[RMDB]
RNA sequence: GGGAACGACUCGAGUAGAGUCGAAAAGUUCGUUGAUGGCUGCAUGGACGUUUGUCUGGGUCACAACGACGGAGAUUGACAAUCUCCGAUACUCCUGGCGUCAUAGUCAUCACCGCUUGAAGGGAGCGCCCACUAGGGAUUUCGAUCCCUAGUGGGCAAAAGAAACAACAACAACAAC
Reactivity to DMS in 0.01 (KOAc 150mM, MgCl2 10mM, bicine 150mM(pH8.5), 24C), signal-to-noise 1, nucleotides 027 to 126: g000u040u040c020g000u000u000g010a160u000g000g000c020u000g000c220a160u060g010g020a040c000g020u020u070u010g020u000c000u070g000g000g020u010c060a050c000a010a030c020g010a050c020g020g000a010g000a000u000u010g000a080c160a220a300u040c000u000c000c000g020a120u030a070c050u000c000c000u000g000g000c060g050u000c100a060u060a160g000u000c000a080u000c000a010c000c040g000c020u000u000g000a090a230g000g000g000a100g000c230
Reactivity to 2A3 in 0.01 (KOAc 150mM, MgCl2 10mM, bicine 150mM(pH8.5), 24C), signal-to-noise 4, nucleotides 027 to 126: g050u050u040c020g000u010u020g070a300u050g010g020c020u100g020c140a240u180g060g000a030c060g120u130u240u300g010u080c010u010g010g010g010u020c020a000c000a030a030c000g010a000c000g000g000a010g010a010u000u020g030a010c060a090a210u000c000u000c000c010g000a030u030a090c010u020c000c000u010g100g010c040g030u030c030a080u140a080g020u020c000a050u040c010a110c020c000g020c010u110u140g010a010a050g040g010g000a010g020c040
Structure probing data (DMS and 2A3) for a 177-nucleotide construct. 2A3 adducts were read by reverse transcription with SuperScript II with manganese. For 2A3, 2,158 sequencing reads were counted. For DMS the reverse transcriptase was MarathonRT.